[RMDB]
RNA sequence: GGGAACGACUCGAGUAGAGUCGAAAACAGAGCUAAUGAGCCACAUACCUACCCAAGGUGAAAGCUCCUUCUCUCGAAAUGUGUAACUCAUGAUUCUCAUGACCCCUGGUUGGAGAGAUCCGGACUAUAGACUAGAGGGUGUUCGCACCCUCUAGAAGGUUUCCUUAAACUUCGGUUUAAGGAAACCAAAAGAAACAACAACAACAAC
Reactivity to DMS in 0.01 (KOAc 150mM, MgCl2 10mM, bicine 150mM(pH8.5), 24C), signal-to-noise 1, nucleotides 027 to 156: c120a170g010a030g010c060u000a100a070u000g010a100g030c000c010a050c060a080u000a050c020c000u000a130c040c010c030a170a090g030g010u010g000a180a100a120g010c060u010c030c010u010u010c010u000c020u000c020g010a170a130a110u010g000u000g000u010a060a040c040u020c010a030u000g000a170u010u000c120u000c010a060u000g000a100c010c020c040c040u000g000g010u000u000g010g010a130g010a130g000a150u000c020c070g000g000a180c090u010a060u000a140g020a190c020u000a020g000a000g030g040g050u000g030u010u020c290g050c010a010c010c000c010u030c000u010a000g000a030a090
Reactivity to 2A3 in 0.01 (KOAc 150mM, MgCl2 10mM, bicine 150mM(pH8.5), 24C), signal-to-noise 1, nucleotides 027 to 156: c060a010g010a030g060c030u080a140a000u130g060a010g000c010c020a000c000a020u170a050c000c010u020a050c050c000c000a020a040g000g030u040g050a120a070a010g050c030u010c020c030u070u060c030u000c010u000c030g070a060a030a210u100g010u020g040u070a120a000c000u010c050a000u050g020a150u230u080c060u030c050a010u100g080a150c000c000c000c030u040g040g040u050u040g000g010a020g000a000g000a060u050c100c010g030g050a010c040u080a100u090a300g050a060c000u000a010g000a000g000g010g000u000g000u020u010c050g020c020a000c000c000c000u000c000u000a000g000a000a000